Chemical mapping of a 207-nucleotide RNA with 2A3 and DMS.
Values cover nucleotides 27 to 156.

[RMDB]
RNA sequence: GGGAACGACUCGAGUAGAGUCGAAAAUUAGGCCAAGUACCAAUGUUGGCUGUUAGAAGGGAUUCUGUUCAUUCAACAUGCAACUUUAGGGAAUGGAAGUAAGUUCAUUUUUAAGUUGUGUUGUCAGUAGGUGCGGUGUCUAGGGUAGUGAAUCCUGAAUCAUCCAUACAUUCGUGUAUGGAUGAUUAAAAGAAACAACAACAACAAC
Reactivity to 2A3 in 0.01 (KOAc 150mM, MgCl2 10mM, bicine 150mM(pH8.5), 24C), signal-to-noise 4, nucleotides 027 to 156: u120u050a030g040g000c010c000a030a010g060u040a060c030c040a080a070u100g040u040u020g090g020c050u020g040u050u080a090g020a060a040g070g020g020a040u100u050c060u110g080u050u050c040a030u090u020c020a040a040c010a040u130g020c000a020a030c030u070u080u110a070g050g000g020a020a010u040g020g030a030a050g080u150a090a070g030u060u050c030a050u060u040u050u060u150a050a030g000u000u010g020u010g020u040u050g030u060c100a040g020u060a050g050g030u020g060c020g000g010u030g010u010c020u030a030g010g020g040u030a030g030u020g080a030a040u030c000c000u010g020
Reactivity to DMS in 0.01 (KOAc 150mM, MgCl2 10mM, bicine 150mM(pH8.5), 24C), signal-to-noise 6, nucleotides 027 to 156: u010u000a090g010g020c010c020a110a150g030u010a120c040c020a130a160u010g010u000u000g000g020c040u000g010u000u010a090g010a100a120g020g030g010a080u000u000c050u000g010u010u010c050a110u000u000c030a050a050c030a050u000g000c020a020a020c010u000u000u010a140g020g000g020a040a050u000g020g010a030a200g020u000a080a160g010u000u010c020a070u000u010u010u010u000a040a090g010u000u000g020u000g020u000u000g010u000c020a110g020u000a070g020g030u000g020c020g010g010u000g010u000c040u000a050g010g020g020u000a080g010u010g010a060a110u000c010c020u000g010
Background
The RNA was probed in 150 mM KOAc, 10 mM MgCl2 and 150 mM bicine (pH 8.5) at 24 C. Source: RMDB library OK3TST, as collected in RNAgym. The 2A3 profile rests on 5,513 reads.